This 207-nucleotide RNA was probed chemically with 2A3 and DMS.
RNA sequence: GGGAACGACUCGAGUAGAGUCGAAAAGAUGCACGGCCUUAGUGUGAUCCGAGAGGAUUACACAUUAUAUCCUAGGCUGUGCUAGACUAGGUCCAUUGUGGCUUUUGCCACUUACAGUACCUCAACUUAUCAAGCAUGGAGGUACGAACCAUGCUAAACGAUGAUAGUGGUUCGCCACUAUCAUCGUAAAAGAAACAACAACAACAAC
Reactivity to 2A3 in 0.01 (KOAc 150mM, MgCl2 10mM, bicine 150mM(pH8.5), 24C), signal-to-noise 3, nucleotides 027 to 156: g140a050u250g040c020a000c030g000g000c030c060u090u130a120g000u000g000u000g010a000u000c000c000g030a020g000a030g060g000a000u000u010a000c000a000c000a010u040u070a080u020a070u190c050c060u060a030g000g000c000u000g000u000g000c010u030a070g010a010c030u000a010g060g000u040c080c050a060u050u090g000u000g010g000c000u060u110u270u300g010c000c000a000c000u000u050a030c000a000g000u030a040c000c040u080c040a130a050c050u070u170a180u280c060a090a000g040c000a000u040g030g020a070g150g090u080a080c000g000a010a010c000c000a020u030g000c000u070a120a160
Reactivity to DMS in 0.01 (KOAc 150mM, MgCl2 10mM, bicine 150mM(pH8.5), 24C), signal-to-noise 1, nucleotides 027 to 156: g000a190u000g010c010a010c000g000g100c000c000u000u010a130g030u010g000u010g000a000u000c000c000g050a300g000a300g020g010a010u000u000a030c010a000c000a100u010u000a100u010a080u000c060c190u010a010g070g020c000u020g040u000g020c010u000a000g000a100c030u000a070g010g010u010c080c070a140u000u000g010u000g070g000c000u030u000u000u020g020c020c000a000c020u000u000a070c160a160g020u010a070c000c030u010c030a090a050c050u000u000a070u000c300a160a010g000c010a130u010g120g000a040g020g030u000a010c050g010a010a100c050c000a020u000g010c070u010a070a290
It was measured as part of the RMDB library OK3TST.
The RNA was probed in 150 mM KOAc, 10 mM MgCl2 and 150 mM bicine (pH 8.5) at 24 C.
For DMS, 1,450 sequencing reads were counted.